Chemical mapping of a 177-nucleotide RNA with 2A3 and DMS.
The reactions ran in a buffer of 150 mM KOAc, 10 mM MgCl2 and 150 mM bicine (pH 8.5), at 24 C.
Reactivities are given for positions 27 through 126.
It was measured as part of the RMDB library TTRDES.

[RMDB]
RNA sequence: GGGAACGACUCGAGUAGAGUCGAAAAGAUAUGGAUAGCACUAGAGCAACAGCAUAAAUCGGAAACGAUUUAUGACAUGCUCAGUGUCUAUCCUAAGUCAAAGGUCAUCAAGUUCGCUUGAUGACCAGACUCUAUUUAGGUUCGCCUAAAUAGAGUCAAAAGAAACAACAACAACAAC
Reactivity to 2A3 in 0.01 (KOAc 150mM, MgCl2 10mM, bicine 150mM(pH8.5), 24C), signal-to-noise 9, nucleotides 027 to 126: g030a000u070a030u150g000g000a000u010a000g010c000a000c030u080a220g010a010g010c020a020a160c060a190g080c000a020u000a010a010a000u010c010g030g020a070a050a040c010g010a010u010u010u000a000u000g130a040c010a040u060g000c000u000c010a000g000u000g000u010c010u000a000u000c000c000u000a040a020g010u010c060a120a070a120g000g000u000c000a000u000c000a010a000g010u070u150c270g120c200u000u000g000a000u000g000a000c000c000a000
Reactivity to DMS in 0.01 (KOAc 150mM, MgCl2 10mM, bicine 150mM(pH8.5), 24C), signal-to-noise 9, nucleotides 027 to 126: g010a050u000a300u000g000g000a020u000a010g000c000a000c000u000a180g020a010g010c010a030a080c290a200g000c010a010u000a000a010a000u010c000g010g000a130a130a260c010g010a010u000u000u000a000u000g000a050c100a190u000g010c000u000c000a020g010u010g000u020c010u000a000u000c000c000u000a020a120g010u010c070a070a160a100g010g000u000c000a000u000c000a010a010g000u000u010c290g020c000u000u000g000a010u000g010a000c000c010a020